Source information:
The record gives the reactivity of an RNA of 207 nucleotides to DMS and 2A3. 2A3 adducts were read by reverse transcription with SuperScript II with manganese. It was measured as part of the RMDB library M2RFOK. Reactivities are rounded to 0.1 and cut off at 0 and 3. The RNA was probed in 150 mM KOAc, 10 mM MgCl2 and 150 mM bicine (pH 8.5) at 24 C. Values cover nucleotides 27 to 156. The 2A3 profile rests on 1,990 reads.
[RMDB]
RNA sequence: GGGAACGACUCGAGUAGAGUCGAAAACGCAAAGCUGCAGCGCGGCGCUCUGGAGGCCUUGCCCCGCGCACUGCUCUUUACAUGGCCCGACGUGAGGGCACUUCGAGGGCAGUGCUGCGGCCUCGUGAAACUGCCCCUAAGUUCGCUUAGGGGCAAACAAAUUUUUAAUGUUCGCAUUAAAAAUUUGAAAAGAAACAACAACAACAAC
Reactivity to DMS in 0.01 (KOAc 150mM, MgCl2 10mM, bicine 150mM(pH8.5), 24C), signal-to-noise 2, nucleotides 027 to 156: c040g000c020a030a000a080g000c010u020g020c020a090g030c040g050c020g020g030c020g030c040u000c040u020g040g030a120g010g010c050c000u000u000g010c000c040c010c030g030c070g020c010a030c050u000g010c000u000c050u000u010u000a150c090a170u000g000g020c000c000c010g020a230c120g000u000g030a190g000g010g030c010a030c020u000u000c090g010a050g000g030g060c040a030g020u000g020c000u010g030c020g010g000c020c000u000c060g040u000g010a110a080a110c080u000g010c010c000c010c020u010a010a030g000u000u010c300g020c020u000u000a020g010g000g040g070c010a000a010a040
Reactivity to 2A3 in 0.01 (KOAc 150mM, MgCl2 10mM, bicine 150mM(pH8.5), 24C), signal-to-noise 2, nucleotides 027 to 156: c030g010c020a030a010a070g000c020u040g010c030a050g040c010g020c050g150g030c030g030c050u030c050u100g090g000a020g000g020c040c090u070u110g020c000c000c020c020g000c010g000c010a010c000u030g010c010u010c030u060u100u080a070c060a150u210g060g000c010c020c010g090a180c070g120u180g070a220g000g000g030c050a080c030u030u070c050g050a000g010g010g000c000a000g000u000g000c000u010g010c010g000g000c000c000u010c020g000u020g000a090a100a010c050u030g000c000c000c000c010u000a000a000g020u030u060c060g030c100u010u000a010g000g000g030g010c000a000a000a000